[RMDB]
RNA sequence: GGGAACGACUCGAGUAGAGUCGAAAAUGUGACUGGGGAGGCGAGCCCACUCACCGCGUUGGGCAGGCUACUGAUCAGGUCCGCUACGCUCACCUGGUUGACGGCGGCGGUGGCGGCAGCCGAGCCGCCCGUGGUCCCAGUUCGCUGGGACCACGGGAAAAGAAACAACAACAACAAC
Reactivity to DMS in 0.01 (KOAc 150mM, MgCl2 10mM, bicine 150mM(pH8.5), 24C), signal-to-noise 2, nucleotides 027 to 126: u030g000u000g010a080c070u000g000g020g010g000a290g010g010c030g000a110g020c020c000c010a070c110u000c050a100c030c090g000c130g010u010u020g000g010g040c050a110g010g000c030u000a040c050u020g000a050u000c060a070g020g000u000c050c080g030c030u010a060c140g020c090u000c080a060c010c050u000g000g000u010u000g000a090c090g000g000c040g000g030c040g010g000u000g000g000c150g010g000c180a100g010c010c030g000a300g010c000c030g010
Reactivity to 2A3 in 0.01 (KOAc 150mM, MgCl2 10mM, bicine 150mM(pH8.5), 24C), signal-to-noise 1, nucleotides 027 to 126: u220g040u080g060a060c040u040g020g030g000g000a040g030g020c000g040a040g040c050c010c010a030c010u030c000a040c000c040g020c060g070u120u110g050g000g040c050a030g000g080c000u100a080c040u080g050a110u050c040a010g090g010u020c050c000g020c080u100a070c130g020c000u030c040a050c010c060u050g070g090u060u070g020a040c070g040g000c000g010g000c040g030g000u010g000g010c080g050g000c000a000g000c000c010g010a040g000c000c000g000